An RNA of 207 nucleotides, treated with 2A3 and DMS and read out base by base. For 2A3 the reverse transcriptase was SuperScript II with manganese.

[RMDB]
RNA sequence: GGGAACGACUCGAGUAGAGUCGAAAAUGUGCGAGUCGAGGAGCGUCCGGUUGUUCUCUCCCUGCCGCGAGUGGCUCUGGUCAAGCUCAACGGUGAGCGGAUCAUGCGUUCUUUAGGAUUCUCCGAGUUCGAUGGGUCUCCGGUAGAGCUACGCUACCUCAGGCUUAUACUUCGGUAUAAGCCUGAGAAAAGAAACAACAACAACAAC
Reactivity to 2A3 in 0.01 (KOAc 150mM, MgCl2 10mM, bicine 150mM(pH8.5), 24C), signal-to-noise 1, nucleotides 027 to 156: u190g010u050g030c020g020a000g020u060c000g040a030g030g000a020g020c040g000u020c060c040g080g040u050u070g050u130u030c050u030c000u000c010c020c000u030g030c040c020g000c010g010a050g020u070g080g000c010u000c000u010g030g010u070c020a010a070g060c000u020c060a050a120c120g180g070u050g020a000g000c040g010g020a030u060c020a050u090g110c000g050u040u100c020u050u060u160a090g020g000a020u070u010c080u000c070c010g020a010g020u090u060c020g020a100u130g010g000g010u040c020u010c020c000g030g000u090a020g000a000g020c050u090a060c020g030c020u030a060c000
Reactivity to DMS in 0.01 (KOAc 150mM, MgCl2 10mM, bicine 150mM(pH8.5), 24C), signal-to-noise 1, nucleotides 027 to 156: u000g010u000g050c000g010a130g040u010c040g020a120g010g030a110g010c050g020u000c040c000g000g000u010u010g010u000u000c060u000c020u000c020c000c000u000g020c030c020g000c040g000a130g020u000g030g010c010u010c020u030g030g000u000c100a050a130g040c010u000c010a040a110c110g030g020u000g010a050g020c060g000g010a110u030c040a140u000g000c050g030u000u000c050u000u010u030a160g020g020a110u000u000c020u020c030c010g010a130g030u000u000c040g010a240u000g030g030g000u000c010u000c030c050g050g000u000a060g000a050g000c050u000a060c040g010c010u000a070c120